[RMDB]
RNA sequence: GGGAACGACUCGAGUAGAGUCGAAAAUGCUGUGAGGCCGCUUAUCGCUGUGGAAGUUACAACACUGAGUGCAAGGGUUGCAUUGGUGUCGCCUACUGUUGCUGCUCUUGAAAGCGGUGCUAUUGCCAUCCAGUCAUUACUUCGGUAAUGACUGGAUAAAAGAAACAACAACAACAAC
Reactivity to 2A3 in 0.01 (KOAc 150mM, MgCl2 10mM, bicine 150mM(pH8.5), 24C), signal-to-noise 5, nucleotides 027 to 126: u070g000c020u040g030u100g090a060g020g000c020c000g000c010u030u060a080u180c040g020c050u030g000u100g060g040a080a100g090u170u120a080c050a120a000c030a040c040u110g070a030g080u110g030c010a030a030g090g000g000u040u020g000c000a020u010u110g010g000u030g060u080c020g080c020c030u040a030c030u040g090u100u020g000c010u020g010c000u010c000u030u070g060a070a030a010g000c020g010g010u000g020c000u030a030u030u200g080c050c010
Reactivity to DMS in 0.01 (KOAc 150mM, MgCl2 10mM, bicine 150mM(pH8.5), 24C), signal-to-noise 5, nucleotides 027 to 126: u010g000c030u010g030u010g000a070g020g010c010c010g000c020u000u010a110u030c080g010c030u000g030u010g010g010a090a070g000u020u040a100c210a110a110c030a020c020u010g000a040g020u000g010c020a020a050g000g020g010u000u010g000c030a030u010u020g010g010u000g000u010c120g010c090c080u030a020c040u000g000u000u000g010c010u000g010c020u010c010u000u020g000a080a070a040g000c000g000g000u010g030c040u010a050u010u010g000c070c140